RNA sequence: GGGAACGACUCGAGUAGAGUCGAAAAGAUAUGGAUAUGAGGAAAGACAUGCUCUCGAGGGACUAUUAGGUCGGAAACGACCUAACGAAUCCCGAGAGAGCAACAGCUUUCCUCAUAUCCUAAGUCACUCCAUCAUAAUGUUCGCAUUAUGAUGGAGAAAAGAAACAACAACAACAAC
Reactivity to DMS in 0.01 (KOAc 150mM, MgCl2 10mM, bicine 150mM(pH8.5), 24C), signal-to-noise 5, nucleotides 027 to 126: g000a070u010a300u010g010g010a020u010a000u000g020a010g000g020a030a010a010g000a070c110a220u010g010c000u000c000u010c000g010a300g010g000g010a020c110u020a300u000u000a010g010g000u010c010g020g010a100a090a270c020g020a020c000c010u010a010a000c040g000a050a230u010c010c010c010g000a300g010a000g020a020g010c020a000a010c180a120g010c010u000u000u000c000c000u000c000a000u000a000u000c000c000u010a000a070g000u010c040a270